[RMDB]
RNA sequence: GGGAACGACUCGAGUAGAGUCGAAAAACUGAUUGAUUCCAUCAACUCGUUCAAGCACCAGCUCGAAGAAGCGUAGCUAAUUUAUCUUAGAAAAUCAUGGAUUUGAAAAAGCUACGCUUCUCGAGAACUCUAUGCGUUAAUUCGUUAACGCAUAGAGAAAAGAAACAACAACAACAAC
Reactivity to DMS in 0.01 (KOAc 150mM, MgCl2 10mM, bicine 150mM(pH8.5), 24C), signal-to-noise 5, nucleotides 027 to 126: a070c070u010g040a060u020u010g000a050u000u010c110c090a170u010c020a030a050c150u010c060g000u010u000c090a110a090g020c140a190c050c030a150g000c000u000c000g000a070a110g010a000a000g000c000g020u000a000g000c000u020a040a160u000u010u000a030u000c030u000u010a200g020a110a070a070a090u030c120a110u000g010g000a030u000u010u020g010a020a010a060a200a030g000c000u000a000c000g000c010u000u010c000u000c000g000a000g000a050a100
Reactivity to 2A3 in 0.01 (KOAc 150mM, MgCl2 10mM, bicine 150mM(pH8.5), 24C), signal-to-noise 9, nucleotides 027 to 126: a000c070u090g020a080u060u040g020a040u220u090c100c060a040u040c040a020a040c070u010c030g050u080u040c060a080a020g040c030a070c040c010a030g040c010u010c000g250a300a150g000a000a000g060c000g000u010a000g000c010u010a030a110u050u060u060a050u010c020u040u100a090g130a150a160a080a080u100c060a120u160g080g020a030u060u030u180g050a050a040a010a010a000g000c000u000a000c000g000c000u000u010c000u000c000g000a000g000a000a000
Notes
An RNA of 177 nucleotides, treated with DMS and 2A3 and read out base by base. Conditions: 150 mM KOAc, 10 mM MgCl2 and 150 mM bicine (pH 8.5), 24 C. 2A3 adducts were read by reverse transcription with SuperScript II with manganese.